Notes: Conditions: 150 mM KOAc, 10 mM MgCl2 and 150 mM bicine (pH 8.5), 24 C. An RNA of 207 nucleotides, treated with 2A3 and read out base by base.
RNA sequence: GGGAACGACUCGAGUAGAGUCGAAAACAGGAAACUGGUUAAUCGUUUUCCUUGGUAGUAUAGCGGAAACCAUAAAUAAGAAGAACUCUAAGUGCUUGAGUAGAGUUAAAAUCAUUAGACAGGCAAUUAAGGUACUCCACGUUCGCGUGGAGUACAAUCACCCAUAUCGGUUCGCCGAUAUGGGUGAAAAAGAAACAACAACAACAAC
Reactivity to 2A3 in 0.01 (KOAc 150mM, MgCl2 10mM, bicine 150mM(pH8.5), 24C), signal-to-noise 1, nucleotides 027 to 156: c040a010g050g080a050a020a030c030u030g030g070u250u220a090a160u170c080g000u030u040u020u060c000c010u040u030g120g000u000a110g030u040a070u020a150g060c030g040g080a050a000a070c030c040a070u190a170a110a010u090a070a020g040a040a030g000a040a000c000u000c000u000a010a010g000u010g170c000u020u020g040a010g000u000a000g000a000g000u040u080a000a180a000a000u060c040a000u000u050a020g010a020c040a010g000g000c020a020a000u100u090a140a000g090g010u010a020c060u000c000c000a010c000g020u040u010c010g050c000g170u000g010g010a000g000u000a000c000a000a000
For 2A3 the reverse transcriptase was SuperScript II with manganese.